[RMDB]
Source: RMDB library OK2TRN, as collected in RNAgym.
Structure probing data (DMS) for a 177-nucleotide construct.
High DMS reactivity at an A or C suggests that its Watson-Crick edge is free.
For DMS the reverse transcriptase was MarathonRT.
RNA sequence: GGGAACGACUCGAGUAGAGUCGAAAAUCACUGCUGCACCAGCAAUCAGUGCAGCAGUGACAAAGGAGGUCAUGGUGGCCUCGUGUUGUGCGAGUGCGACUACCAGCCGCCAGAUCGCCCAAGCGGGAGCGUUACAAAUCUUCGGAUUUGUAACGCUAAAAGAAACAACAACAACAAC
Reactivity to DMS in 0.01 (KOAc 150mM, MgCl2 10mM, bicine 150mM(pH8.5), 24C), signal-to-noise 3, nucleotides 027 to 126: u000c000a000c000u010g000c000u000g030c000a010c000c150a150g050c240a080a100u010c210a140g020u000g000c000a000g020c010a000g000u000g010a000c100a080a120a080g020g010a050g020g020u000c070a150u010g030g020u000g010g000c000c020u000c020g030u010g010u000u030g010u010g010c000g000a020g000u010g040c050g000a150c060u010a030c040c050a080g000c020c020g010c000c010a070g000a130u010c120g000c000c020c020a120a110g000c140g010g010g010